[RMDB]
RNA sequence: GGGAACGACUCGAGUAGAGUCGAAAACUGCGCGUGUUGCAGGAGGGUGGGUGAUGGUCUCGAUCUCUUGUAUUUAGAGAUGGGGUGCCCUUGGUCAGGCAGGUUGUGUAUUCUCUGGGGGCGCGUGCGAUAUAUAAUAUUUCGAUAUUAUAUAUCGAAAAGAAACAACAACAACAAC
Reactivity to DMS in 0.01 (KOAc 150mM, MgCl2 10mM, bicine 150mM(pH8.5), 24C), signal-to-noise 4, nucleotides 027 to 126: c030u010g010c040g010c070g010u020g010u020u010g000c090a080g000g000a120g000g000g020u030g010g000g010u010g010a060u010g010g010u010c020u010c030g010a020u000c000u000c000u000u000g010u030a060u040u040u010a020g010a030g000a010u000g010g010g010g010u030g010c040c020c080u010u020g010g010u000c080a130g000g000c080a080g010g000u000u000g000u000g010u010a100u020u010c040u000c050u010g000g000g000g000g020c020g000c040g020u010g020
Reactivity to 2A3 in 0.01 (KOAc 150mM, MgCl2 10mM, bicine 150mM(pH8.5), 24C), signal-to-noise 3, nucleotides 027 to 126: c010u050g000c010g000c030g040u090g030u060u110g020c040a010g030g020a040g020g040g030u150g000g000g030u040g030a090u070g000g060u010c000u020c030g060a020u000c000u000c000u010u050g090u140a190u110u240u080a010g010a000g000a010u030g000g000g010g000u090g040c010c010c000u030u080g060g020u100c030a010g000g030c010a010g040g000u050u040g040u010g010u020a080u050u020c040u000c010u020g010g000g000g000g010c010g000c000g010u020g020

The record gives the reactivity of an RNA of 177 nucleotides to DMS and 2A3. The reactions ran in a buffer of 150 mM KOAc, 10 mM MgCl2 and 150 mM bicine (pH 8.5), at 24 C. For 2A3, 4,126 sequencing reads were counted.